[RMDB]
RNA sequence: GGGAACGACUCGAGUAGAGUCGAAAAUGAGGUCAGGAGUUGGAGACCAGCCUGGCUAACAUGGUGAAACCCUGUUUCUACUAAAAAUACAAAAAAUUAGCCAGGCCUGGUGGCACGUGCCUGUAAUCCCAGCUACUAGGGAGGCUGAGGCGAGAGAGGACUUAAGGGUAUUCGUACCCUUAAGUCCAAAAGAAACAACAACAACAAC
Reactivity to 2A3 in 0.01 (KOAc 150mM, MgCl2 10mM, bicine 150mM(pH8.5), 24C), signal-to-noise 1, nucleotides 027 to 156: u140g030a030g000g040u040c040a030g020g000a050g010u120u040g070g080a080g010a100c020c060a040g000c050c010u030g000g030c020u000a030a050c030a100u230g050g000u010g050a040a000a000c140c160c040u100g000u000u010u010c030u090a110c050u100a100a130a080a120a050u280a090c240a040a120a020a190a010a160u050u010a000g000c030c000a070g010g030c020c000u010g000g000u010g000g040c070a000c200g060u070g030c000c020u020g000u010a000a070u020c060c010c000a010g050c040u090a120c000u060a100g100g000g000a060g060g000c010u030g040a070g040g000c080g000a030g000a000g000a000
The data come from the RNA Mapping Database (RMDB), library OK3TST. This 207-nucleotide RNA was probed chemically with 2A3. The reactions ran in a buffer of 150 mM KOAc, 10 mM MgCl2 and 150 mM bicine (pH 8.5), at 24 C.